[RMDB]
This 177-nucleotide RNA was probed chemically with DMS and 2A3. Reactivities are given for positions 27 through 126. The reactions ran in a buffer of 150 mM KOAc, 10 mM MgCl2 and 150 mM bicine (pH 8.5), at 24 C. For 2A3, 13,339 sequencing reads were counted. High 2A3 reactivity points to a flexible backbone, as in loops and unpaired stretches.

RNA sequence: GGGAACGACUCGAGUAGAGUCGAAAAACUGAUCAGUACCGGCCGCGCGUACUCUGAGUAUCUGAUCGCUCUCUAUGUAGUACCGAGGCCAGCGCAGUGUAUACACAGUGAUCGUAUACGGCCCGGCCAUUGUCCAACAAUUCGUUGUUGGACAAUGAAAAGAAACAACAACAACAAC
Reactivity to DMS in 0.01 (KOAc 150mM, MgCl2 10mM, bicine 150mM(pH8.5), 24C), signal-to-noise 8, nucleotides 027 to 126: a070c080u000g010a030u000c060a060g010u010a070c070c060g010g010c020c030g020c030g010c230g010u000a020c030u000c040u000g000a040g010u000a070u010c090u000g010a070u000c110g000c060u000c010u000c250u010a080u010g010u010a020g010u000a030c020c010g000a060g010g010c000c000a040g000c050g010c020a070g020u010g010u000a030u000a030c020a100c090a180g010u010g010a090u010c110g020u000a030u000a030c020g010g010c010c020c020g010g010c160
Reactivity to 2A3 in 0.01 (KOAc 150mM, MgCl2 10mM, bicine 150mM(pH8.5), 24C), signal-to-noise 6, nucleotides 027 to 126: a000c050u050g010a050u110c050a030g030u070a070c030c070g010g010c000c020g000c010g040c050g020u010a020c020u000c040u050g020a020g010u050a090u110c080u080g100a110u100c060g010c020u010c000u000c020u070a100u300g100u070a040g010u030a020c000c020g010a070g010g000c010c010a010g000c040g000c020a020g020u010g010u160a020u020a030c050a010c020a080g180u080g200a220u190c090g000u020a010u000a020c020g030g000c000c020c010g030g000c010